The record gives the reactivity of an RNA of 177 nucleotides to DMS. The RNA was probed in 150 mM KOAc, 10 mM MgCl2 and 150 mM bicine (pH 8.5) at 24 C.
[RMDB]
RNA sequence: GGGAACGACUCGAGUAGAGUCGAAAAUGCAGGUAAAGUUAUUGCUAUUGACGGCUUUGGCGCAAGUGCACCUGGCGAUUUAGUAGUUGAAAAAUAUGGAUUUACUAAAGAAAAUAUCUUAAACCAAAACCCAAUAUACCUUCGGGUAUAUUGGGUUAAAAGAAACAACAACAACAAC
Reactivity to DMS in 0.01 (KOAc 150mM, MgCl2 10mM, bicine 150mM(pH8.5), 24C), signal-to-noise 1, nucleotides 027 to 126: u010g020c030a050g010g010u000a080a100a140g000u000u010a040u010u000g000c030u000a050u010u010g000a160c190g040g000c020u000u000u020g000g060c000g030c050a090a090g010u010g030c060a010c040c010u000g010g020c030g010a060u000u010u000a010g000u000a010g010u000u030g000a060a100a070a130a110u040a140u000g010g000a060u020u000u010a040c020u010a010a010a100g000a100a020a120a050u010a040u010c080u000u010a100a090a270c050c040a030a090